[RMDB]
RNA sequence: GGGAACGACUCGAGUAGAGUCGAAAAGAUAUGGAUUCCGUCCAAGGCUGAUGACCUUCUUCGGAAACGAAGAAGCAAGGCUGGACGAAUCCUAAGUCAAACUCAAUGCCCUUCGGGGCAUUGAGAACCUGUCUAGUAUCUUCGGAUACUAGACAGGAAAAGAAACAACAACAACAAC
Reactivity to 2A3 in 0.01 (KOAc 150mM, MgCl2 10mM, bicine 150mM(pH8.5), 24C), signal-to-noise 3, nucleotides 027 to 126: g000a010u050a030u060g000g000a000u030u000c260c100g000u010c020c030a100a170g300g000c020u040g010a300u060g020a090c000c020u000u000c010u020u000c010g000g030a020a020a010c000g000a020a000g040a010a000g010c010a070a160g080g030c230u300g030g000a000c000g000a000a010u010c000c000u000a030a000g010u000c040a110a020a150c000u000c020a000a010u000g010c000c010c000u040u080c300g080g010g000g000c000a010u010u010g000a010g000a000a040
Reactivity to DMS in 0.01 (KOAc 150mM, MgCl2 10mM, bicine 150mM(pH8.5), 24C), signal-to-noise 2, nucleotides 027 to 126: g000a000u000a050u030g000g010a010u000u000c140c120g030u000c000c010a300a260g050g000c000u000g000a040u010g000a080c300c000u000u000c000u000u000c000g000g000a000a030a040c010g000a000a000g000a020a000g000c000a030a010g010g050c010u030g010g000a030c020g010a020a010u000c000c000u010a000a040g010u000c000a160a140a180c000u000c000a010a000u000g010c000c000c000u000u000c300g040g050g010g000c000a000u000u000g010a000g010a040a050